[RMDB]
RNA sequence: GGGAACGACUCGAGUAGAGUCGAAAACCGUAGGAAGCAUCUAAGAGCCUUGGACCACACAUGUUUGGAUAGUUCGAAAGAGCUAUCUGAUAUGUGUGCUAGGCUCUGUGCUUCCUAAACGGAAAGCCAGUAAGACCUUUCGAGGUCUUACUGGCAAGAUUCCACUCCUAUUCGUAGGAGUGGAAUCAAAAGAAACAACAACAACAAC
Reactivity to DMS in 0.01 (KOAc 150mM, MgCl2 10mM, bicine 150mM(pH8.5), 24C), signal-to-noise 2, nucleotides 027 to 156: c010c000g000u000a040g000g000a010a000g020c000a020u010c020u000a130a040g000a030g030c000c000u010u010g030g000a150c160c020a020c010a000c010a000u000g030u000u000u010g050g000a010u010a010g020u000u000c020g000a200a120a280g010a030g010c000u000a000u000c010u000g010a000u000a000u000g030u000g000u000g000c030u000a020g010g040c000u000c000u000g020u000g000c020u020u000c000c010u010a000a010a070c010g000g020a080a090a120g000c000c010a020g020u010a020a020g000a020c010c010u010u000u020c280g000a050g040g010u000c000u000u010a000c010u000g000g000c000a000a000
Reactivity to 2A3 in 0.01 (KOAc 150mM, MgCl2 10mM, bicine 150mM(pH8.5), 24C), signal-to-noise 4, nucleotides 027 to 156: c000c000g010u000a000g000g010a010a000g000c020a010u070c120u300a160a040g030a000g020c020c010u110u150g060g090a150c130c010a000c000a000c000a010u020g070u070u040u080g050g000a010u000a000g000u000u010c010g030a100a090a060g000a040g020c000u030a000u010c000u000g000a010u000a000u010g000u000g000u000g000c000u000a000g000g000c010u030c000u000g000u000g000c000u000u000c000c000u000a000a030a000c010g020g040a150a040a030g000c000c000a000g010u000a010a000g000a000c010c000u060u070u300c300g080a030g000g000u010c000u000u000a000c000u000g000g000c000a000a000
The record gives the reactivity of an RNA of 207 nucleotides to DMS and 2A3. The RNA was probed in 150 mM KOAc, 10 mM MgCl2 and 150 mM bicine (pH 8.5) at 24 C. For DMS the reverse transcriptase was MarathonRT. Reactivities are given for positions 27 through 156. For 2A3 the reverse transcriptase was SuperScript II with manganese. For 2A3, 5,212 sequencing reads were counted.